The record gives the reactivity of an RNA of 207 nucleotides to DMS and 2A3. For DMS, 3,484 sequencing reads were counted. 2A3 adducts were read by reverse transcription with SuperScript II with manganese. Values cover nucleotides 27 to 156. DMS adducts were read by reverse transcription with MarathonRT.
[RMDB]
RNA sequence: GGGAACGACUCGAGUAGAGUCGAAAAUGAGAUAGCUAAAUCACCUCGGUAUGAUUAGGGUGAGACCUAGGAACCGUAGGGGUAUUCUCAAAGGAAGCUUUUGGAGUGACGCCCAUGUAAGUGGGAUAAGAACCAACCCACUUCGGUGGGUUGGUAACCAUUGUCAUAUCUUCGGAUAUGACAAUGGAAAAGAAACAACAACAACAAC
Reactivity to DMS in 0.01 (KOAc 150mM, MgCl2 10mM, bicine 150mM(pH8.5), 24C), signal-to-noise 2, nucleotides 027 to 156: u000g000a110g010a110u000a060g030c040u000a040a060a140u000c040a040c010c000u000c010g020g100u000a060u000g020a250u000u000a070g010g000g000u030g020a240g010a130c020c010u000a040g010g000a090a040c020c020g000u030a050g010g000g010g000u000a050u000u000c030u000c040a080a090a080g020g010a110a110g020c040u000u020u000u000g010g040a090g010u000g000a070c030g010c010c000c020a020u000g000u000a060a210g000u030g010g010g000a050u030a050a090g010a140a050c000c000a000a020c010c000c000a000c010u000u000c230g040g020u010g000g020g040u010u020g000g010u000a000a060
Reactivity to 2A3 in 0.01 (KOAc 150mM, MgCl2 10mM, bicine 150mM(pH8.5), 24C), signal-to-noise 2, nucleotides 027 to 156: u080g010a010g020a030u080a030g060c090u120a050a120a070u120c050a050c010c000u040c030g030g000u210a180u190g040a090u050u050a020g020g040g020u070g130a050g050a060c000c000u000a010g010g030a020a040c010c000g020u100a040g000g020g000g000u010a070u120u060c040u010c000a040a030a000g060g010a060a020g040c010u040u080u110u130g000g040a040g020u040g020a040c080g030c010c010c000a020u080g100u160a110a130g010u040g000g000g000a020u070a110a050g060a010a010c000c000a000a000c000c000c010a010c000u030u040c090g060g000u010g000g000g020u000u000g000g000u000a000a000
Background
The data come from the RNA Mapping Database (RMDB), library M2RFPK.